[RMDB]
RNA sequence: GGGAACGACUCGAGUAGAGUCGAAAACUGCGCUGAGCCCUUCUCCCCCAGCUUGCCGGUGUCCUAGGGAAUUGGAAGGUCAUCCUUCACAGGAUCGUGUGGAAGUCCUGCUCGGGGCGGAAGCAUUAUAAACCUUAGACGUUCGCGUCUAAGGUAACAGUUACAGCUGGUUCGCCAGCUGUAACUGAAAAGAAACAACAACAACAAC
Reactivity to DMS in 0.01 (KOAc 150mM, MgCl2 10mM, bicine 150mM(pH8.5), 24C), signal-to-noise 1, nucleotides 027 to 156: c030u000g030c100g010c000u060g010a170g050c010c010c040u020u010c040u010c050c030c000c050c020a220g000c010u020u020g000c020c040g020g020u030g000u000c010c020u020a070g010g030g000a120a070u000u030g050g000a080a050g030g000u010c120a140u000c010c010u000u000c070a060c020a060g040g020a030u010c080g010u010g000u010g020g080a220a200g000u000c010c040u000g020c040u000c100g000g020g000g060c040g010g000a220a290g000c030a100u030u020a090u000a140a070a020c000c000u010u000a000g010a020c000g000u000u020c270g020c030g060u000c000u000a000a010g010g020u000a000a010
Reactivity to 2A3 in 0.01 (KOAc 150mM, MgCl2 10mM, bicine 150mM(pH8.5), 24C), signal-to-noise 1, nucleotides 027 to 156: c020u040g020c050g060c120u140g100a020g000c000c040c030u260u300c150u250c000c010c000c000c080a010g030c000u010u000g030c010c000g010g000u040g020u010c000c000u010a070g000g050g020a050a120u090u110g100g050a090a070g060g000u120c050a130u240c000c000u050u050c020a010c000a140g080g000a160u030c000g030u000g020u000g110g010a000a050g030u050c010c000u030g140c020u030c150g030g010g040g020c000g020g010a030a000g020c000a000u000u150a120u100a070a150a030c000c000u040u000a000g000a000c000g010u030u020c210g000c000g180u000c000u000a000a000g000g000u000a000a000